[RMDB]
RNA sequence: GGGAACGACUCGAGUAGAGUCGAAAAUGCAGAAUACUGAAGCUCUUCUGUUUCUGAGCAGUGUGGUUACAAAAACUAAUUCAAGUCCAUUUGUCCAUGAUACUAAAGGGACAUAGAGGGAUUUCUAUUUCUGUCAUGUCUAUCAAUUAGGUAAUGACAUGUAAUCCACGUUCGCGUGGAUUACAUGAAAAGAAACAACAACAACAAC
Reactivity to 2A3 in 0.01 (KOAc 150mM, MgCl2 10mM, bicine 150mM(pH8.5), 24C), signal-to-noise 5, nucleotides 027 to 156: u080g000c000a010g030a100a020u120a130c110u120g030a040a030g030c010u010c000u090u040c020u030g010u030u070u030c050u050g050a050g050c090a050g050u010g010u030g100g040u110u120a030c020a020a070a060a110a020c040u070a060a100u210u150c090a100a010g010u000c030c010a090u020u010u050g000u000c000c010a000u080g050a070u070a110c030u070a090a100a010g020g000g000a000c020a000u050a020g070a060g050g020g010a010u000u070u050c030u030a130u030u080u000c030u040g130u100c020a040u030g070u020c020u040a070u100c060a160a120u190u090a110g090g000u120a130a120u090g020a050
Reactivity to DMS in 0.01 (KOAc 150mM, MgCl2 10mM, bicine 150mM(pH8.5), 24C), signal-to-noise 2, nucleotides 027 to 156: u000g010c010a090g020a130a090u010a120c130u010g010a050a110g030c020u020c030u000u000c030u000g010u000u000u010c020u020g000a100g020c040a080g010u000g060u000g010g010u000u020a180c030a050a070a060a070a100c060u010a060a140u000u010c180a040a060g010u010c020c050a170u000u020u000g020u000c020c010a110u010g000a180u000a120c090u020a050a080a100g000g030g030a040c010a030u010a010g020a070g040g010g000a040u010u000u010c040u010a080u000u000u000c020u010g010u000c070a050u000g010u000c050u000a070u020c050a040a180u000u000a040g010g020u000a100a090u010g000a270